[RMDB]
RNA sequence: GGGAACGACUCGAGUAGAGUCGAAAACUUCUGGGCCAGACCCCGUUUUGGGCUCCAGACAUCCGGGCACUGACCCUGGCAGAGGAGAGGUGUCCGCCCUACCAGGGAGGGCUUUGCUGGAGCACCACUUUUACCGUGGAUUCGUCCACGGUAAAAGAAAAGAAACAACAACAACAAC
Reactivity to 2A3 in 0.01 (KOAc 150mM, MgCl2 10mM, bicine 150mM(pH8.5), 24C), signal-to-noise 2, nucleotides 027 to 126: c000u160u040c060u130g010g020g030c070c060a060g050a200c070c000c030c070g040u060u040u100u160g010g000g000c000u040c000c000a020g110a140c000a020u090c070c060g000g010g000c010a010c050u040g080a070c010c020c050u040g260g120c140a090g020a050g300g020a030g000a020g020g040u010g000u010c000c000g020c010c000c000u040a030c010c030a130g150g030g030a010g000g010g000c000u040u160u100g020c010u010g030g010a020g030c050a200c060c010a030
Reactivity to DMS in 0.01 (KOAc 150mM, MgCl2 10mM, bicine 150mM(pH8.5), 24C), signal-to-noise 2, nucleotides 027 to 126: c050u000u010c010u010g010g000g020c080c100a100g000a210c070c010c010c120g020u000u000u000u000g030g020g010c010u000c000c010a010g010a130c080a060u000c280c120g020g000g000c000a010c000u000g000a300c140c000c010u010g020g020c190a140g000a060g010g000a020g010a300g000g000u010g010u000c000c000g000c000c000c000u000a110c050c070a070g000g010g000a080g000g010g000c110u000u010u020g010c020u000g000g000a030g040c010a060c000c010a100

An RNA of 177 nucleotides, treated with 2A3 and DMS and read out base by base.
Source: RMDB library OK2TRN, as collected in RNAgym.
High 2A3 reactivity points to a flexible backbone, as in loops and unpaired stretches.